[RMDB]
RNA sequence: GGGAACGACUCGAGUAGAGUCGAAAAUUUCGUUGCGGGACUGAGCAAUCGCCUGUUGCACGACGCCCUGUUCGGCUAGCGGACGGCCGAACGCCACCCGGUUGCGGACGCGAUUCACCAUGAGUGCAUUUAAACCUGCCUUCGGGCAGGUUUAAAUAAAAGAAACAACAACAACAAC
Reactivity to 2A3 in 0.01 (KOAc 150mM, MgCl2 10mM, bicine 150mM(pH8.5), 24C), signal-to-noise 1, nucleotides 027 to 126: u130u080u060c030g020u010u060g000c030g000g040g000a050c060u130g010a070g030c030a040a080u180c040g020c020c010u150g000u160u020g050c070a000c060g080a000c000g020c000c000c010u040g020u010u000c000g000g040c000u000a010g000c040g030g060a040c050g010g000c020c000g020a010a000c000g020c000c000a120c070c000c000g000g030u150u060g020c000g000g060a000c000g000c000g030a050u010u110c100a110c000c000a070u180g060a010g000u080g030c000
Reactivity to DMS in 0.01 (KOAc 150mM, MgCl2 10mM, bicine 150mM(pH8.5), 24C), signal-to-noise 2, nucleotides 027 to 126: u000u000u010c040g040u020u000g050c020g000g010g000a120c080u000g000a070g000c070a060a130u000c050g010c000c030u000g050u030u020g000c070a080c070g020a110c150g000c020c020c080u050g030u000u000c030g010g000c030u040a140g000c000g000g000a040c030g020g000c000c010g020a040a010c020g030c090c110a040c080c050c000g000g000u000u010g040c090g020g000a070c030g000c020g000a080u020u010c040a070c080c000a130u010g020a080g000u030g000c170
An RNA of 177 nucleotides, treated with 2A3 and DMS and read out base by base. It was measured as part of the RMDB library OK1LIB. DMS adducts were read by reverse transcription with MarathonRT. Conditions: 150 mM KOAc, 10 mM MgCl2 and 150 mM bicine (pH 8.5), 24 C.